This 177-nucleotide RNA was probed chemically with DMS and 2A3. For 2A3, 1,611 sequencing reads were counted. 2A3 adducts were read by reverse transcription with SuperScript II with manganese. In probing experiments dimethyl sulfate is read out at A N1 and C N3, which are open when not base-paired. The RNA was probed in 150 mM KOAc, 10 mM MgCl2 and 150 mM bicine (pH 8.5) at 24 C. The data come from the RNA Mapping Database (RMDB), library OK2TST.
RNA sequence: GGGAACGACUCGAGUAGAGUCGAAAAGGCGACGAUCCGUAUCGCGGCACGCCCGCCGAAUACGCGCAGGCGGGACGCACGUACCUCGCGUAUGCGGGACGCUUCUUCGUCGACGAAGCGACGCGCACAGUCCCUCCGGAUUCGUCCGGAGGGACUGAAAAGAAACAACAACAACAAC
Reactivity to DMS in 0.01 (KOAc 150mM, MgCl2 10mM, bicine 150mM(pH8.5), 24C), signal-to-noise 2, nucleotides 027 to 126: g010g020c030g030a070c050g010a070u000c070c040g010u010a120u000c050g010c010g000g040c080a030c040g020c040c000c020g020c010c010g000a250a100u020a030c110g000c080g010c100a180g000g000c010g000g000g010a040c060g020c180a300c080g010u010a050c020c030u000c050g030c010g020u000a050u000g000c010g000g000g020a110c020g010c020u000u000c030u000u000c010g000u000c150g010a030c080g000a070a070g000c040g000a260c030g020c050g020c080a160
Reactivity to 2A3 in 0.01 (KOAc 150mM, MgCl2 10mM, bicine 150mM(pH8.5), 24C), signal-to-noise 2, nucleotides 027 to 126: g110g000c030g020a110c040g010a160u020c030c000g050u040a040u040c010g020c000g010g060c030a010c070g030c000c010c000g000c010c010g040a040a090u300a180c160g040c030g000c110a090g000g000c000g000g000g000a000c000g050c010a030c010g060u040a080c020c030u040c020g020c020g060u240a020u080g030c010g030g040g000a000c010g000c040u020u000c010u050u050c030g300u080c140g010a070c050g030a010a000g010c030g040a020c050g030c020g000c010a010